[RMDB]
RNA sequence: GGGAACGACUCGAGUAGAGUCGAAAAUUCUGAUUCGUCAGAAAAUUAAUCCUAAGUCGAUCACUUUGAUCUCCAUACAGGCAACAGCUAUCGGAAACGAUAGACAUGCCUGGUGGAGGGAGUGAUCGAUAUGGAACUAAUCAAGAUUCGUCUUGAACCUAUUUCUAUGUUUCGACAUAGAAAUAGGAAAAGAAACAACAACAACAAC
Reactivity to DMS in 0.01 (KOAc 150mM, MgCl2 10mM, bicine 150mM(pH8.5), 24C), signal-to-noise 2, nucleotides 027 to 156: u000u010c030u000g010a050u000u000c180g090u000c000a030g020a070a060a050a040u000u010a000a090u000c020c010u010a080a300g060u000c010g000a010u000c000a010c000u000u000u010g010a110u010c010u000c000c000a070u000a160c000a000g020g010c020a070a150c070a170g000c000u010a000u000c000g000g020a250a090a260c000g010a040u000a040g000a060c010a300u000g010c000c010u020g010g010u000g000g000a060g020g020g000a020g020u000g020a000u000c000g000a000u000a020u000g010g000a050a060c030u000a040a060u000c030a040a180g010a190u010u000c080g020u000c010u010u000g010a130a240
Reactivity to 2A3 in 0.01 (KOAc 150mM, MgCl2 10mM, bicine 150mM(pH8.5), 24C), signal-to-noise 7, nucleotides 027 to 156: u030u010c000u000g000a020u030u050c100g060u030c060a000g100a030a110a010a020u230u190a080a070u030c020c000u060a160a020g020u000c000g000a000u000c000a010c030u190u140u130g080a110u120c010u000c010c000a030u160a300c000a000g010g000c000a030a060c030a220g030c000u000a000u000c010g070g000a130a070a050c010g010a000u010a000g070a050c010a080u030g000c000c000u000g000g000u000g000g000a000g010g010g000a010g000u000g000a000u000c000g010a000u000a010u030g020g010a030a070c080u140a120a130u030c020a010a020g050a080u060u160c180g080u030c070u040u040g020a090a100
An RNA of 207 nucleotides, treated with DMS and 2A3 and read out base by base. For DMS the reverse transcriptase was MarathonRT. Values cover nucleotides 27 to 156. The RNA was probed in 150 mM KOAc, 10 mM MgCl2 and 150 mM bicine (pH 8.5) at 24 C. For 2A3, 6,736 sequencing reads were counted.